The data come from the RNA Mapping Database (RMDB), library OK1LIB.
The record gives the reactivity of an RNA of 177 nucleotides to 2A3 and DMS.
Reactivities are given for positions 27 through 126.
For 2A3, 1,632 sequencing reads were counted.
RNA sequence: GGGAACGACUCGAGUAGAGUCGAAAAACCAAUGGAGGGUGAGCCUUGUGUAGUUUAGUCUGCUGUUACAUGGUUUAAGUUGGAGUGGGUGUAGGGAUAAUCUAUGUGGCGAUUCAAUGUUGGUACAGGACGAAGAAUGCUUCGGCGUUCUUCGUCCAAAAGAAACAACAACAACAAC
Reactivity to 2A3 in 0.01 (KOAc 150mM, MgCl2 10mM, bicine 150mM(pH8.5), 24C), signal-to-noise 3, nucleotides 027 to 126: a000c010c000a050a010u140g050g000a020g050g010g040u080g010a010g000c000c000u050u030g010u020g000u000a040g020u050u070u070a070g010u030c080u060g020c050u060g020u100u090a050c040a070u090g110g000u030u020u110a130a070g010u040u090g060g000a130g020u120g010g010g000u060g040u070a080g010g020g000a040u030a150a040u010c050u040a040u120g020u050g040g020c010g010a000u070u090c060a020a080u060g000u000u020g030g000u080a080c080a090
Reactivity to DMS in 0.01 (KOAc 150mM, MgCl2 10mM, bicine 150mM(pH8.5), 24C), signal-to-noise 2, nucleotides 027 to 126: a110c030c000a150a070u030g040g000a060g030g000g000u010g000a030g010c010c030u000u000g010u000g000u030a000g010u030u020u010a060g030u030c030u010g000c000u010g020u020u020a080c060a040u010g000g030u000u000u030a090a050g040u000u000g000g000a140g000u030g000g000g000u000g000u000a050g000g010g000a100u020a050a010u030c040u020a050u000g000u030g010g010c020g000a060u010u000c010a060a130u010g010u000u000g000g000u020a090c160a160